[RMDB]
This 177-nucleotide RNA was probed chemically with 2A3 and DMS. The 2A3 profile rests on 1,228 reads. DMS (dimethyl sulfate) methylates the pairing face of unpaired adenines and cytosines. For DMS, 2,230 sequencing reads were counted.
RNA sequence: GGGAACGACUCGAGUAGAGUCGAAAAGAUCCACCUGCCUCAGCCUCCCAAAGUGCUGGGAUUACAGAUGUGAGCCACCCUCUCCGGCCUGGGAGUGUGUUUCUUAAAGGAGAAAGGGGGACAUAUACAACCGUAUGUCAUUCGUGACAUACGGUUGAAAAGAAACAACAACAACAAC
Reactivity to 2A3 in 0.01 (KOAc 150mM, MgCl2 10mM, bicine 150mM(pH8.5), 24C), signal-to-noise 1, nucleotides 027 to 126: g050a050u040c000c010a020c030c000u000g040c000c000u020c000a000g020c000c000u000c050c010c000a020a130a050g190u160g070c000u010g040g000g010a010u030u180a040c030a060g150a120u120g090u040g100a040g070c030c000a070c040c000c000u000c010u050c030c000g040g020c000c020u020g000g000g010a090g020u140g020u030g030u030u060u050c040u000u130a130a070a020g130g000a010g070a050a040a020g030g010g000g000g010a000c020a010u300a000u000a050
Reactivity to DMS in 0.01 (KOAc 150mM, MgCl2 10mM, bicine 150mM(pH8.5), 24C), signal-to-noise 2, nucleotides 027 to 126: g010a180u010c000c020a060c070c010u000g010c200c010u000c030a090g000c010c010u000c020c020c030a070a070a060g020u010g020c010u000g000g010g020a080u000u010a110c110a040g000a100u000g010u020g000a080g020c060c020a060c040c020c010u010c020u000c010c020g030g000c080c030u000g010g010g000a040g020u020g020u000g030u010u000u000c040u000u000a060a150a210g000g000a060g010a020a200a080g000g000g010g000g000a060c090a050u000a090u000a150